Structure probing data (2A3 and DMS) for a 177-nucleotide construct. The RNA was probed in 150 mM KOAc, 10 mM MgCl2 and 150 mM bicine (pH 8.5) at 24 C. 2A3 adducts were read by reverse transcription with SuperScript II with manganese. The DMS profile rests on 29,605 reads. The data come from the RNA Mapping Database (RMDB), library OK2TST.
RNA sequence: GGGAACGACUCGAGUAGAGUCGAAAAUGGGUCCGGGCGCGCUAGGACAAGGGCGUCGGCACUGCGAUGGCUGCGCGAGGUGAACGCCGAGCAGUUCGCCGACCGUAAGCCUCGUCAGCUAUCCGGGAAAUAAGCCUGUAUUCGUACAGGCUUAUUUAAAAGAAACAACAACAACAAC
Reactivity to 2A3 in 0.01 (KOAc 150mM, MgCl2 10mM, bicine 150mM(pH8.5), 24C), signal-to-noise 3, nucleotides 027 to 126: u090g040g010g040u030c030c000g000g050g030c030g020c020g030c050u060a070g160g110a090c110a080a040g040g040g010c010g000u010c000g010g020c040a020c040u040g020c080g040a030u070g000g010c010u010g000c040g000c010g060a020g000g040u050g030a060a010c020g000c010c010g020a060g000c020a040g040u140u140c140g000c010c000g000a000c010c010g010u020a030a020g000c000c000u000c000g020u010c000a000g000c000u010a010u030c000c010g000g010g030
Reactivity to DMS in 0.01 (KOAc 150mM, MgCl2 10mM, bicine 150mM(pH8.5), 24C), signal-to-noise 9, nucleotides 027 to 126: u010g010g010g010u010c010c020g020g010g010c050g010c060g010c030u000a110g020g010a110c230a080a060g010g010g010c030g010u000c010g010g020c100a080c020u000g010c100g010a050u000g010g010c010u000g010c210g010c020g000a100g010g010u000g000a200a080c100g010c070c030g000a140g030c020a130g020u010u010c150g010c000c000g000a100c230c030g010u000a060a290g000c000c000u000c010g000u000c020a060g000c020u000a040u000c010c010g000g000g000